[RMDB]
The record gives the reactivity of an RNA of 177 nucleotides to DMS and 2A3. The RNA was probed in 150 mM KOAc, 10 mM MgCl2 and 150 mM bicine (pH 8.5) at 24 C. DMS adducts were read by reverse transcription with MarathonRT. Reactivities are given for positions 27 through 126.
RNA sequence: GGGAACGACUCGAGUAGAGUCGAAAAGAUAUGGAGCCUCUCCCCACCUAUAUGGGCACGAAGAACAAGCGAGCUUCGGAAACGAAGCUCGCUUGGGAGUGCCUUGUAUAGAGGAGGCUCCUAAGUCCACAUACUACUAGUUCGCUAGUAGUAUGUGAAAAGAAACAACAACAACAAC
Reactivity to DMS in 0.01 (KOAc 150mM, MgCl2 10mM, bicine 150mM(pH8.5), 24C), signal-to-noise 4, nucleotides 027 to 126: g010a130u020a130u020g010g010a040g000c010c020u000c010u000c120c020c010c050a300c170c010u000a020u000a010u000g010g000g010c000a010c020g000a150a150g000a130a210c010a010a020g000c000g010a020g010c000u000u010c000g020g000a080a090a210c000g010a020a000g000c000u000c000g000c000u000u000g000g010g000a140g010u000g000c000c000u010u010g020u000a010u000a020g010a130g020g000a020g020g000c010u000c000c000u000a020a100g010u010c070
Reactivity to 2A3 in 0.01 (KOAc 150mM, MgCl2 10mM, bicine 150mM(pH8.5), 24C), signal-to-noise 2, nucleotides 027 to 126: g120a100u300a210u300g020g010a000g020c010c000u040c050u100c040c000c010c020a010c000c000u000a000u000a010u050g010g010g000c020a010c000g300a300a230g080a130a020c020a000a010g030c000g000a000g010c010u020u000c000g050g040a090a080a020c010g000a000a000g060c000u020c010g000c040u000u010g000g010g010a010g000u000g000c010c000u000u050g000u000a010u000a010g030a030g020g010a010g040g000c000u000c000c010u000a000a000g010u000c030
Record summary
The DMS profile rests on 4,889 reads.